Source information:
The record gives the reactivity of an RNA of 177 nucleotides to 2A3 and DMS. For DMS, 11,521 sequencing reads were counted. The RNA was probed in 150 mM KOAc, 10 mM MgCl2 and 150 mM bicine (pH 8.5) at 24 C. Values cover nucleotides 27 to 126. DMS adducts were read by reverse transcription with MarathonRT. The 2A3 profile rests on 13,798 reads.
RNA sequence: GGGAACGACUCGAGUAGAGUCGAAAAGAUGUGAAGCAGUGAUGAGAAACUGGAUCUGACUGGCUGUGCUGAGUUUGUUCAAUCCAACCCUGAGCUUCACGUUAAAAGCUAUCGGUUCGCCGAUAGCGACAUAAGAAGGCUUCGGCCUUCUUAUGUCAAAAGAAACAACAACAACAAC
Reactivity to 2A3 in 0.01 (KOAc 150mM, MgCl2 10mM, bicine 150mM(pH8.5), 24C), signal-to-noise 8, nucleotides 027 to 126: g050a030u090g000u000g010a000a010g000c010a050g160u070g160a150u080g020a090g110a130a130a030c080u040g020g000a020u040c070u070g010a010c000u010g010g010c010u040g040u160g190c120u140g040a020g020u020u030u060g060u080u020c010a010a010u010c000c010a030a100c020c000c010u050g030a010g020c000u010u000c010a000c010g000u010u030a040a140a040a060g000c010u000a000u000c000g010g040u040u070c200g030c070c000g000a000u000a000g010c000
Reactivity to DMS in 0.01 (KOAc 150mM, MgCl2 10mM, bicine 150mM(pH8.5), 24C), signal-to-noise 7, nucleotides 027 to 126: g000a040u000g010u000g010a010a010g020c000a180g010u010g010a120u010g000a110g000a090a150a130c180u000g000g000a020u000c150u000g000a030c020u000g000g000c010u000g010u000g020c200u010g000a030g020u000u000u000g000u010u000c030a050a030u000c010c010a030a130c050c010c000u000g000a090g000c000u000u000c010a010c020g010u000u010a050a070a080a170g010c000u000a000u000c000g010g000u000u010c210g020c010c000g010a010u000a000g010c000